[RMDB]
RNA sequence: GGGAACGACUCGAGUAGAGUCGAAAAGAUAUGGACUGGCUAGGGAGCUGUCACGUCGGAAACGACGUGCAGCAUCGAUCUAGCAGUCCUAAGUCAAAUCUCAGAAGAUGUUCGCAUCUUCUGAGAAGGCUGUUUACGUCUUCGGACGUAAACAGCCAAAAGAAACAACAACAACAAC
Reactivity to 2A3 in 0.01 (KOAc 150mM, MgCl2 10mM, bicine 150mM(pH8.5), 24C), signal-to-noise 1, nucleotides 027 to 126: g010a000u040a040u090g020g000a010c020u060g300g270c010u000a010g070g020g000a060g040c000u000g140u300c000a020c000g010u050c010g020g000a030a020a000c000g000a000c000g020u010g000c000a000g030c000a070u180c040g010a020u000c010u000a000g000c000a000g010u010c000c000u000a000a000g010u010c000a090a070a100u020c010u030c000a020g030a010a000g000a000u020g050u060u210c300g030c180a010u000c000u020u000c000u000g010a010g030a000a010

Source information
The record gives the reactivity of an RNA of 177 nucleotides to 2A3. 2A3 is a SHAPE reagent: it acylates the 2'-hydroxyl of flexible nucleotides of all four kinds.